[RMDB]
RNA sequence: GGGAACGACUCGAGUAGAGUCGAAAACGAUGAUGCUCAGCCGCGACGCCAUCGCCGACGUGAUCGAGGUCGUGCGGCCCGGGGAGUUCUACCGCCCCGAUCAUGGGGUGAUCUUCCGCCACGUCGUGGAGCUGUUCGGUCGGGGCGAGCCCGCCGAACCGUUUGACCAAUUCGUUGGUCAAACGGUAAAAGAAACAACAACAACAAC
Reactivity to DMS in 0.01 (KOAc 150mM, MgCl2 10mM, bicine 150mM(pH8.5), 24C), signal-to-noise 1, nucleotides 027 to 156: c070g030a060u010g000a170u000g000c040u010c040a150g050c080c050g050c040g000a040c000g000c070c050a050u010c070g110c040c030g010a060c000g020u000g040a120u000c060g010a110g000g030u000c020g040u010g050c060g000g010c050c030c050g000g090g030g000a070g000u010u010c090u000a070c070c000g010c020c000c000c000g000a110u000c090a170u030g000g000g030g050u000g010a070u000c010u010u000c020c000g020c060c020a080c010g000u000c040g110u010g030g000a170g030c040u000g000u000u000c060g000g000u000c030g020g010g010g010c040g010a190g000c000c020c010g000c020c020g000a130
Reactivity to 2A3 in 0.01 (KOAc 150mM, MgCl2 10mM, bicine 150mM(pH8.5), 24C), signal-to-noise 4, nucleotides 027 to 156: c060g040a060u190g020a060u190g020c020u040c070a020g010c020c000g110c020g040a020c040g040c040c020a110u080c030g040c020c020g070a130c020g040u080g060a130u180c060g020a130g020g100u070c060g060u170g110c080g020g020c000c000c020g020g000g010g000a010g020u070u050c100u200a110c040c020g030c000c000c000c000g050a140u160c080a140u300g030g000g000g000u010g000a020u020c000u070u010c010c010g040c070c040a040c040g020u050c020g000u110g020g050a050g000c060u070g040u050u050c040g020g080u140c050g010g040g000g030c050g020a100g230c010c010c020g030c010c010g010a000
Background
The record gives the reactivity of an RNA of 207 nucleotides to DMS and 2A3. The reactions ran in a buffer of 150 mM KOAc, 10 mM MgCl2 and 150 mM bicine (pH 8.5), at 24 C. For DMS the reverse transcriptase was MarathonRT. 2A3 adducts were read by reverse transcription with SuperScript II with manganese.